An RNA of 177 nucleotides, treated with 2A3 and DMS and read out base by base. Conditions: 150 mM KOAc, 10 mM MgCl2 and 150 mM bicine (pH 8.5), 24 C.

RNA sequence: GGGAACGACUCGAGUAGAGUCGAAAAUAGUCUCUAAGAUUAAGCCAUGCAUGUUUCCGCAAUCAGGGACGAAUAGCUCAGUAAAACUGCGAUGAUUUAGUCUGGCUGUGUAGAUAACUACGUGAAAAUCAGAGGAUAGGUUCGCCUAUCCUCUGAUAAAAGAAACAACAACAACAAC
Reactivity to 2A3 in 0.01 (KOAc 150mM, MgCl2 10mM, bicine 150mM(pH8.5), 24C), signal-to-noise 6, nucleotides 027 to 126: u090a010g030u010c010u000c020u080a110a060g020a120u180u070a050a010g040c020c010a020u100g040c030a040u130g100u050u050u010c020c010g010c050a010a010u060c030a060g030g000g030a010c030g000a030a060u030a040g040c030u030c040a020g030u080a010a080a080a060c020u050g010c060g110a090u100g030a050u080u070u080a050g030u010c030u020g020g000c010u000g050u020g000u050a010g020a160u100a170a080c050u050a020c050g100u110g100a050a070a010
Reactivity to DMS in 0.01 (KOAc 150mM, MgCl2 10mM, bicine 150mM(pH8.5), 24C), signal-to-noise 6, nucleotides 027 to 126: u030a100g000u000c010u010c040u030a060a060g010a080u010u010a070a080g010c030c020a050u010g010c060a070u030g000u000u000u000c030c030g020c070a060a060u020c070a080g000g010g010a090c050g010a060a050u030a090g000c050u010c030a040g010u020a060a060a070a300c040u000g010c080g000a070u020g010a070u000u010u000a040g000u010c040u000g000g020c040u010g000u010g010u000a030g000a110u030a110a080c070u000a040c080g000u020g000a110a080a060